[RMDB]
RNA sequence: GGGAACGACUCGAGUAGAGUCGAAAAUUCAGAGCCUUCGGGCUCUGAACCGUUUUCCUUGUUCCCAUUAUUGGUAACUCGGUAAUAAAAGGAAAGUAGCCGCAACUUGUUCGUUCGCGAACAAGAAGUUACUCUUUUGGUUCGCCAAAAGAGUAACAAAAGAAACAACAACAACAAC
Reactivity to DMS in 0.01 (KOAc 150mM, MgCl2 10mM, bicine 150mM(pH8.5), 24C), signal-to-noise 3, nucleotides 027 to 126: u000u010c000a010g010a000g020c000c000u000u010c160g020g020g020c000u010c010u000g000a000a020c230c140g010u000u000u010u000c000c020u000u010g000u000u000c000c000c010a200u000u010a070u000u000g010g000u010a110a110c270u020c020g000g000u000a030a030u000a030a050a030a010g000g000a030a010a040g010u000a110g010c090c070g000c220a090a170c020u000u000g010u010u000c000g020u000u020c200g020c030g000a010a000c010a000a010g000a060a140
Reactivity to 2A3 in 0.01 (KOAc 150mM, MgCl2 10mM, bicine 150mM(pH8.5), 24C), signal-to-noise 2, nucleotides 027 to 126: u040u020c000a000g000a000g000c010c020u040u080c240g120g000g000c000u020c000u000g000a000a000c010c010g010u010u050u000u000c010c000u000u050g000u030u030c010c000c000a020u070u100a030u020u060g010g020u030a030a030c010u010c060g010g000u030a050a040u070a060a300a040a010g060g000a070a040a030g010u060a030g100c050c050g080c080a050a150c050u000u010g000u020u020c000g020u030u060c260g000c000g110a000a000c010a000a000g010a010a000
The record gives the reactivity of an RNA of 177 nucleotides to DMS and 2A3. 2A3 adducts were read by reverse transcription with SuperScript II with manganese. Conditions: 150 mM KOAc, 10 mM MgCl2 and 150 mM bicine (pH 8.5), 24 C. DMS adducts were read by reverse transcription with MarathonRT. It was measured as part of the RMDB library M2PK50. For 2A3, 3,004 sequencing reads were counted.